[RMDB]
RNA sequence: GGGAACGACUCGAGUAGAGUCGAAAAUUAUAUAUCAUCAGCAUAGCUGUUCCAUCUCCUCGCACUUCGUCUCGCCCAGGCGACGUUUUUUCUCCCGAUAGAAGCGGGACUGCUGUUGCCGCUUCCACAUCCUAUAAAUCUUCGGAUUUAUAGGAUGAAAAGAAACAACAACAACAAC
Reactivity to DMS in 0.01 (KOAc 150mM, MgCl2 10mM, bicine 150mM(pH8.5), 24C), signal-to-noise 8, nucleotides 027 to 126: u010u010a110u010a130u010a090u010c040a070u010c040a060g010c050a080u010a080g010c030u000g000u010u000c030c020a080u000c040u000c020c020u000c060g010c090a080c070u000u000c040g010u000c020u000c090g010c030c020c030a160g010g000c040g010a030c080g010u000u000u000u000u000u000c100u000c010c010c010g010a160u010a070g010a020a010g010c000g000g000g000a060c040u010g010c130u000g000u000u000g010c000c000g010c010u000u000c010c220a170
Reactivity to 2A3 in 0.01 (KOAc 150mM, MgCl2 10mM, bicine 150mM(pH8.5), 24C), signal-to-noise 3, nucleotides 027 to 126: u100u050a050u030a030u020a010u250c020a010u010c030a010g020c020a060u060a090g020c030u030g060u110u000c000c010a020u000c010u010c020c020u000c020g000c020a060c020u040u020c020g030u020c010u020c030g050c020c000c010a010g040g000c010g010a020c010g010u000u000u000u020u130u020c070u030c000c000c000g030a030u040a180g030a020a010g000c000g000g040g000a010c020u090g040c040u100g080u060u030g160c000c000g000c020u020u000c010c000a010